[RMDB]
RNA sequence: GGGAACGACUCGAGUAGAGUCGAAAAGGCACCGCCGGUCACGUUGUCGAUGGUCUCGAUGACCCGGUCGAUCUCGCCCACCUUGGUGUGGUUGGCGUAGACAUCGCGCAACUCGGCGAGCAGGGCGUGCACACACCGUGUUCGCACGGUGUGUGCAAAAAGAAACAACAACAACAAC
Reactivity to 2A3 in 0.01 (KOAc 150mM, MgCl2 10mM, bicine 150mM(pH8.5), 24C), signal-to-noise 1, nucleotides 027 to 126: g030g000c060a050c040c000g030c010c030g030g060u150c100a010c070g000u010u060g030u050c000g010a000u160g060g100u020c070u090c140g050a080u110g050a130c020c040c020g040g060u010c090g010a010u000c000u010c040g000c000c000c000a040c010c000u090u140g300g100u300g060u060g080g020u000u000g010g000c000g030u000a030g030a080c000a070u000c030g000c020g020c060a000a000c060u010c080g060g000c000g000a000g010c020a060g030g060g070c060g130
Reactivity to DMS in 0.01 (KOAc 150mM, MgCl2 10mM, bicine 150mM(pH8.5), 24C), signal-to-noise 1, nucleotides 027 to 126: g040g020c070a080c040c020g010c000c000g000g000u000c110a130c130g020u000u000g050u000c020g020a030u010g000g010u000c200u000c000g010a050u000g000a120c010c030c020g010g000u000c000g000a090u000c060u010c010g010c000c020c030a080c070c010u020u000g010g040u010g040u000g000g010u000u000g000g000c000g010u000a120g000a140c070a040u000c010g000c160g000c000a030a050c050u000c080g010g000c010g000a090g020c130a100g000g000g000c130g000